This 177-nucleotide RNA was probed chemically with 2A3 and DMS. The RNA was probed in 150 mM KOAc, 10 mM MgCl2 and 150 mM bicine (pH 8.5) at 24 C. Source: RMDB library OK1LIB, as collected in RNAgym. For 2A3, 4,346 sequencing reads were counted.

RNA sequence: GGGAACGACUCGAGUAGAGUCGAAAAGUGGCGAGUACGAUCGACCACCCGGGCCACGUGGUGUCGCUGGCCGGCGUACUGGCCUUCGUGGCGUUGGUGAUUGUCAUCGUCGCCGAGACCGGGCGGCCUUCCAAAUUGGGUUCGCCCAAUUUGGAAGAAAAGAAACAACAACAACAAC
Reactivity to 2A3 in 0.01 (KOAc 150mM, MgCl2 10mM, bicine 150mM(pH8.5), 24C), signal-to-noise 5, nucleotides 027 to 126: g120u090g010g010c010g010a010g050u120a040c050g030a160u050c070g140a130c000c010a010c020c000c020g010g030g000c010c010a050c090g040u140g000g100u180g050u110c020g010c060u050g070g050c080c030g000g000c010g040u090a070c040u080g080g000c010c010u040u080c050g060u060g020g030c160g130u020u060g000g020u030g040a230u110u080g010u030c010a010u030c020g010u000c010g000c000c000g020a030g000a030c010c020g000g000g000c020g010g010c000
Reactivity to DMS in 0.01 (KOAc 150mM, MgCl2 10mM, bicine 150mM(pH8.5), 24C), signal-to-noise 2, nucleotides 027 to 126: g000u030g010g010c010g020a070g010u000a090c040g000a050u010c110g000a060c040c030a030c030c130c020g010g010g000c000c030a070c040g030u000g010g010u030g010u020c030g000c090u000g000g000c090c020g000g000c130g030u050a030c080u040g000g000c000c010u000u020c110g020u010g000g010c040g000u000u000g010g010u020g000a120u040u020g000u000c030a020u000c020g020u010c020g000c010c010g000a100g010a120c060c030g010g000g010c000g000g000c050